[RMDB]
RNA sequence: GGGAACGACUCGAGUAGAGUCGAAAAUCUACUUCGGUAGAACUAGCCCGUAGGACUCUACCCACCUUCGCUACGACAUCGAUCAAAGGUUCGAAAGAGCCUUUGGGAGUCGUGGUAGAAGAGGAGUCCUAAACGGAGGAGGAACGUUCGCGUUCAACGAAUUUAGCUACUUCGGUAGCUAAAUUCGAAAAGAAACAACAACAACAAC
Reactivity to 2A3 in 0.01 (KOAc 150mM, MgCl2 10mM, bicine 150mM(pH8.5), 24C), signal-to-noise 1, nucleotides 027 to 156: u000c000u000a010c020u050u070c190g110g000u060a030g020a080a050c040u020a030g190c060c000c000g010u000a010g000g000a000c010u000c010u150a290c050c040c000a110c000c040u020u020c000g000c020u000a020c000g020a020c000a300u130c020g120a090u110c040a010a000a020g020g000u010u000c020g060a120a100a130g000a000g000c000c000u000u000u010g010g000g000a030g000u000c030g000u000g000g010u030a300g000a010a000g010a000g010g000a000g020u000c000c000u010a040a060a000c020g020g010a110g070g060a120g140g010a060a040c010g040u080u110c270g040c010g150u070u070c030a030a030
Reactivity to DMS in 0.01 (KOAc 150mM, MgCl2 10mM, bicine 150mM(pH8.5), 24C), signal-to-noise 1, nucleotides 027 to 156: u000c010u010a010c010u000u010c120g000g010u020a060g060a030a110c050u000a140g020c080c000c030g080u000a030g010g010a020c030u000c010u000a080c000c000c000a300c120c010u000u010c000g070c000u000a130c000g050a030c020a170u000c160g000a180u000c010a030a020a030g020g030u000u000c000g000a120a110a300g010a050g000c010c000u000u020u020g000g000g000a100g020u000c000g050u000g000g030u000a060g000a000a060g000a150g020g000a070g040u000c000c000u000a010a010a050c010g040g000a120g000g020a110g050g000a040a070c010g000u000u000c160g000c050g000u010u000c020a060a140
An RNA of 207 nucleotides, treated with 2A3 and DMS and read out base by base. Values cover nucleotides 27 to 156. Source: RMDB library RNAMAK, as collected in RNAgym. DMS adducts were read by reverse transcription with MarathonRT. For DMS, 1,522 sequencing reads were counted. High DMS reactivity at an A or C suggests that its Watson-Crick edge is free.